[RMDB]
RNA sequence: GGGAACGACUCGAGUAGAGUCGAAAAGAGAAGUAAACUGUUAGUCGCCAGAGGCUUGACCCGCUGUGGCCGCGGCGGCCUAGUUGAGACUGAAACGGCGGGUUAGAGCUCGGAGAGACCGAGCAGAAAUGCUCACCCUAUUCGUAGGGUGAGCAUUAAAAGAAACAACAACAACAAC
Reactivity to 2A3 in 0.01 (KOAc 150mM, MgCl2 10mM, bicine 150mM(pH8.5), 24C), signal-to-noise 3, nucleotides 027 to 126: g100a000g030a100a100g090u260a090a090a090c060u050g060u180u200a030g010u010c000g030c000c000a060g030a100g210g010c000u010u040g060a180c000c010c000g000c000u040g000u030g020g000c040c020g000c040g080g000c050g000g000c000c000u080a070g010u030u090g030a040g050a070c040u070g020a040a050a000c020g010g000c000g000g000g010u000u030a020g000a010g000c000u000c030g000g000a120g020a000g020a090c000c010g000a000g000c000a000g020a010
Reactivity to DMS in 0.01 (KOAc 150mM, MgCl2 10mM, bicine 150mM(pH8.5), 24C), signal-to-noise 4, nucleotides 027 to 126: g000a100g020a120a070g020u030a050a060a130c060u010g000u010u010a180g030u000c000g020c000c000a100g020a120g010g000c000u010u010g020a050c010c000c010g040c010u010g000u000g000g020c020c000g000c300g040g020c040g030g020c030c050u020a050g000u020u010g000a040g000a260c130u040g020a090a020a050c000g000g020c010g030g010g000u000u010a090g010a040g020c010u020c010g010g020a290g000a160g020a060c020c040g010a020g000c030a040g010a040
The record gives the reactivity of an RNA of 177 nucleotides to 2A3 and DMS.
For DMS the reverse transcriptase was MarathonRT.
The reactions ran in a buffer of 150 mM KOAc, 10 mM MgCl2 and 150 mM bicine (pH 8.5), at 24 C.